Conditions: 150 mM KOAc, 10 mM MgCl2 and 150 mM bicine (pH 8.5), 24 C. The record gives the reactivity of an RNA of 177 nucleotides to 2A3 and DMS. Values are in units of 0.01, from 0 to 300, in steps of 10. DMS adducts were read by reverse transcription with MarathonRT. High DMS reactivity at an A or C suggests that its Watson-Crick edge is free.
[RMDB]
RNA sequence: GGGAACGACUCGAGUAGAGUCGAAAAACGAAGGCCGGUGAGAAAGGAGCUGCCAGCACUAAGCCGGACGGCGCCCUCGCACCAGUUCCGCUGUGGGUUCGCCUACAAGAACGUACGGUGUUGAGGCGAGCCCAUUACUGUUCGCAGUAAUGGGCUCAAAAGAAACAACAACAACAAC
Reactivity to 2A3 in 0.01 (KOAc 150mM, MgCl2 10mM, bicine 150mM(pH8.5), 24C), signal-to-noise 2, nucleotides 027 to 126: a000c030g010a030a020g090g030c010c010g020g010u030g000a090g120a040a140a050g060g040a100g030c030u160g170c060c070a020g020c010a010c040u080a050a010g000c000c010g000g020a020c020g060g010c020g030c020c000c000u000c000g000c000a000c000c010a010g000u000u010c000c010g030c030u000g010u010g010g020g000u000u060c180g090c040c010u020a010c000a020a120g000a010a000c010g030u120a020c070g010g000u000g010u040u300g000a010g020g020c020
Reactivity to DMS in 0.01 (KOAc 150mM, MgCl2 10mM, bicine 150mM(pH8.5), 24C), signal-to-noise 4, nucleotides 027 to 126: a160c060g000a080a090g010g020c030c010g020g020u000g010a120g000a080a110a060g020g000a130g030c020u000g030c090c090a070g040c020a050c060u010a100a240g010c030c000g010g000a070c090g000g020c080g000c140c010c010u000c020g010c010a010c010c000a300g000u000u000c020c030g020c060u010g010u000g010g000g000u010u010c220g020c010c000u010a000c010a040a080g000a060a020c010g010u010a070c270g000g000u000g020u000u010g020a020g010g010c150
Reactivities are given for positions 27 through 126.